[RMDB]
RNA sequence: GGGAACGACUCGAGUAGAGUCGAAAAAGUGGGAUCGCAGGAGGAUUUGGAUGAUCGAUGUUAUGCCAUGCUUCAUAUGGCAUUCAAGAAAUUAGGCUGGAUGCUGCUUCCUCAGACUUGUCAUCCGGGCGAAGGUGACGUUCGCGUCACCUUCGCCAAAAGAAACAACAACAACAAC
Reactivity to 2A3 in 0.01 (KOAc 150mM, MgCl2 10mM, bicine 150mM(pH8.5), 24C), signal-to-noise 1, nucleotides 027 to 126: a000g000u120g050g040g020a060u000c050g000c120a030g000g010a030g000g040a040u130u000u210g150g060a240u030g020a000u110c000g010a010u040g050u300u000a000u000g000c000c000a000u000g000c140u190u040c000a270u070a000u240g030g000c060a000u070u060c150a060a000g040a130a060a050u300u050a020g020g020c000u030g000g000a000u070g040c020u040g000c000u000u000c000c000u070c000a030g030a080c070u070u070g010u070c020a020u000c040c000g020
Source: RMDB library OK1LIB, as collected in RNAgym. Chemical mapping of a 177-nucleotide RNA with 2A3. For 2A3 the reverse transcriptase was SuperScript II with manganese. The RNA was probed in 150 mM KOAc, 10 mM MgCl2 and 150 mM bicine (pH 8.5) at 24 C.